[RMDB]
RNA sequence: GGGAACGACUCGAGUAGAGUCGAAAAGCAUCUGGAGUUGGAACAUCUUCAAUGGCUUAUGAAAUAUCCAACAGAUUGGGUAUUAAGACCAUGAUAAGCACAGACAUGAUUCGCGAAGUCAUGCGAACCGAUGGUAGGUGUUCGCACCUACCAUCGGAAAAGAAACAACAACAACAAC
Reactivity to DMS in 0.01 (KOAc 150mM, MgCl2 10mM, bicine 150mM(pH8.5), 24C), signal-to-noise 1, nucleotides 027 to 126: g000c030a030u000c100u000g000g010a220g020u000u010g010g000a150a020c000a080u000c050u010u000c150a100a130u000g020g000c000u000u000a170u010g000a030a010a000u000a000u000c000c000a040a300c300a130g000a020u110u000g000g000g040u000a000u000u000a100a080g000a060c120c110a100u000g000a000u000a040a050g000c040a010c120a180g000a130c000a050u010g000a020u000u070c080g130c130g000a080a020g030u020c040a030u040g000c020g030a000a020
Reactivity to 2A3 in 0.01 (KOAc 150mM, MgCl2 10mM, bicine 150mM(pH8.5), 24C), signal-to-noise 1, nucleotides 027 to 126: g040c050a030u000c030u030g010g020a040g000u030u010g050g040a080a070c000a010u050c000u270u000c060a150a170u060g000g000c010u000u060a040u140g220a000a000a000u000a000u000c000c000a010a010c060a140g240a280u260u170g000g040g000u000a000u000u120a070a000g070a050c000c000a020u020g020a000u040a170a000g000c060a000c030a080g120a000c000a070u040g010a050u060u070c000g100c030g020a030a000g080u050c000a050u080g040c020g050a080a200
Overview:
This 177-nucleotide RNA was probed chemically with DMS and 2A3. 2A3 adducts were read by reverse transcription with SuperScript II with manganese. For DMS the reverse transcriptase was MarathonRT. Source: RMDB library OK1LIB, as collected in RNAgym. The RNA was probed in 150 mM KOAc, 10 mM MgCl2 and 150 mM bicine (pH 8.5) at 24 C.